[RMDB]
RNA sequence: GGGAACGACUCGAGUAGAGUCGAAAACGGCAUUUCCCCAGCUGCCAUGACCUACCAGGCUGCGGUGCGGCUCGCCGCACAGGUCAUCCCUCAUCGGGCGCGUCCUGCGUCCUUCCACGCCAACCCAAGACCAUUGCUUCCUUCGGGAAGCAAUGAACACGUUAACAGUGUUCGCACUGUUAACGUGAAAAGAAACAACAACAACAAC
Reactivity to 2A3 in 0.01 (KOAc 150mM, MgCl2 10mM, bicine 150mM(pH8.5), 24C), signal-to-noise 2, nucleotides 027 to 156: c030g020g000c070a040u070u060u110c010c010c000c000a010g020c040u020g030c000c030a090u070g020a050c020c010u050a100c090c040a070g020g000c060u030g030c030g040g000u040g020c070g080g000c090u120c130g080c000c000g000c000a020c020a030g000g040u010c010a050u040c030c010c000u080c030a160u170c050g000g010g000c000g000c010g060u150c010c080u130g010c000g010u000c010c000u010u020c040c030a080c020g000c010c010a080a060c040c010c020a060a010g080a030c050c000a010u000u000g000c010u000u010c000c000u030u060c080g070g000g010a000a010g010c000a000a000u000g000a020a010